[RMDB]
RNA sequence: GGGAACGACUCGAGUAGAGUCGAAAAUCAAGAGUACAACUUGGAACUAUGAUUGUACUCGGAGUAAAUCAUAGUCGACGAAGUCGAAUACAUGUUACUCAUCUGUCAUGUAUUCAAGUUGACAGAAGAUAGUAGGCACAUUCGUGUGUUUACUAUCAAAAGAAACAACAACAACAAC
Reactivity to DMS in 0.01 (KOAc 150mM, MgCl2 10mM, bicine 150mM(pH8.5), 24C), signal-to-noise 9, nucleotides 027 to 126: u030c060a090a090g000a040g000u010a040c010a010a020c010u000u000g000g020a150a090c080u030a020u000g000a060u000u000g010u000a010c010u010c110g010g010a150g020u010a030a030a040u020c050a040u010a050g000u000c000g010a030c020g010a120a100g020u020c090g000a050a010u010a010c030a010u000g000u010u020a040c050u010c260a100u030c170u010g000u000c010a000u000g010u000a010u010u010c020a010a100g010u000u000g010a030c020a090g020a100a090
Reactivity to 2A3 in 0.01 (KOAc 150mM, MgCl2 10mM, bicine 150mM(pH8.5), 24C), signal-to-noise 9, nucleotides 027 to 126: u080c020a030a040g030a020g030u040a030c000a010a010c010u010u010g030g050a060a030c030u030a040u040g040a090u010u010g070u030a010c000u010c040g010g000a040g020u070a020a020a000u070c020a030u030a030g010u000c000g000a010c010g060a120a030g060u080c030g000a010a000u010a000c000a000u010g020u040u090a030c030u030c080a170u050c060u060g040u020c000a000u000g010u000a020u000u020c000a000a000g010u000u000g010a000c010a010g040a040a000